[RMDB]
RNA sequence: GGGAACGACUCGAGUAGAGUCGAAAAAGAUAUGGAGUAAAGGGAGCUAAGGUCAGCGAAGAACACGCUCGGAAACGAGCGUGGGAGCUGACAGCAGCAGCUAGCUUUGAUCUUUACUCCUAAGUCACUUCAGAUAGGAGUUCGCUCCUAUCUGAAGAAAAGAAACAACAACAACAAC
Reactivity to 2A3 in 0.01 (KOAc 150mM, MgCl2 10mM, bicine 150mM(pH8.5), 24C), signal-to-noise 2, nucleotides 027 to 126: a030g060a020u110a070u110g000g000a010g000u030a010a000a020g050g000g010a040g000c010u070a200a040g230g000u030c000a010g000c060g190a300a040g000a050a000c020a010c030g040c010u000c020g040g030a080a130a050c010g030a000g030c000g010u020g000g020g000a010g010c000u010g020a000c010a000g000c020a010g020c040a000g030c040u040a000g010c000u300u260u150g070a090u020c010u000u020u000a000c010u000c000c000u000a040a010g000u000c030a010
Reactivity to DMS in 0.01 (KOAc 150mM, MgCl2 10mM, bicine 150mM(pH8.5), 24C), signal-to-noise 2, nucleotides 027 to 126: a040g000a020u000a300u000g010g010a030g000u010a000a000a060g010g010g010a010g030c000u010a030a100g030g000u000c000a020g040c000g020a090a190g000a170a190c010a000c000g020c000u020c010g000g000a100a100a150c000g000a010g010c000g010u000g010g000g010a070g010c000u000g000a020c000a080g030c060a070g010c170a050g010c060u000a010g000c030u000u020u000g000a080u010c000u000u000u000a010c010u000c000c000u010a020a080g000u000c030a200
Conditions: 150 mM KOAc, 10 mM MgCl2 and 150 mM bicine (pH 8.5), 24 C. An RNA of 177 nucleotides, treated with 2A3 and DMS and read out base by base. DMS adducts were read by reverse transcription with MarathonRT. It was measured as part of the RMDB library TTRDES. The 2A3 profile rests on 3,855 reads.